The record gives the reactivity of an RNA of 177 nucleotides to 2A3.
RNA sequence: GGGAACGACUCGAGUAGAGUCGAAAAGCGCGCCGCCGGCGGCGCCACCGGUGCGGGAGGGUACACCCAAGCAUCCGGGACCGGCCGUCCCGCCGGGAACGCCGUGCUCCUACACACCGGCGGCGGGCAUCUCGUGCGGAUUCGUCCGCACGAGAUGAAAAGAAACAACAACAACAAC
Reactivity to 2A3 in 0.01 (KOAc 150mM, MgCl2 10mM, bicine 150mM(pH8.5), 24C), signal-to-noise 2, nucleotides 027 to 126: g060c150g040c000g010c080c000g000c020c000g010g000c020g000g020c020g090c000c000a040c010c020g000g000u120g100c110g000g000g000a040g030g000g020u130a080c030a250c030c010c040a060a090g110c060a180u130c070c120g000g000g000a050c040c070g040g020c000c010g260u030c010c000c020g050c000c000g000g010g000a020a000c000g000c000c000g020u020g020c000u070c010c010u140a110c110a040c010a020c060c030g000g000c000g020g000c000g000g010g010

Source information
The 2A3 profile rests on 1,028 reads.